[RMDB]
RNA sequence: GGGAACGACUCGAGUAGAGUCGAAAAGCGCAGUUACCGGCGAAGCUAGCCGCCGAGAGAUACCGCGUCGCGAACCACGUCGCCGCAUAGCUCGUAAGAAUACGAUUACUGUGGCACCUCCAACACCACCGCCGGAAGAAGAGCCCAGUGACGAGGAACAGCCAUUCUAAUUCGUUAGAAUGGCUGUAAAAGAAACAACAACAACAAC
Reactivity to 2A3 in 0.01 (KOAc 150mM, MgCl2 10mM, bicine 150mM(pH8.5), 24C), signal-to-noise 1, nucleotides 027 to 156: g020c000g000c010a050g020u060u040a090c000c020g040g070c040g010a060a010g030c090u150a020g050c050c000g030c000c010g070a100g010a000g040a080u080a130c010c060g000c010g060u090c080g020c020g000a060a040c040c030a030c070g070u040c080g000c040c000g000c050a070u050a030g030c030u000c000g000u010a000a080g140a300a220u050a070c000g010a000u040u000a050c040u010g010u030g030g000c000a040c000c000u020c020c070a020a090c040a010c030c000a000c020c010g040c020c030g060g000a010a010g040a000a000g000a040g050c000c040c020a000g030u010g040a000c030g070a000g010g070a020

An RNA of 207 nucleotides, treated with 2A3 and read out base by base. For 2A3, 757 sequencing reads were counted. The RNA was probed in 150 mM KOAc, 10 mM MgCl2 and 150 mM bicine (pH 8.5) at 24 C.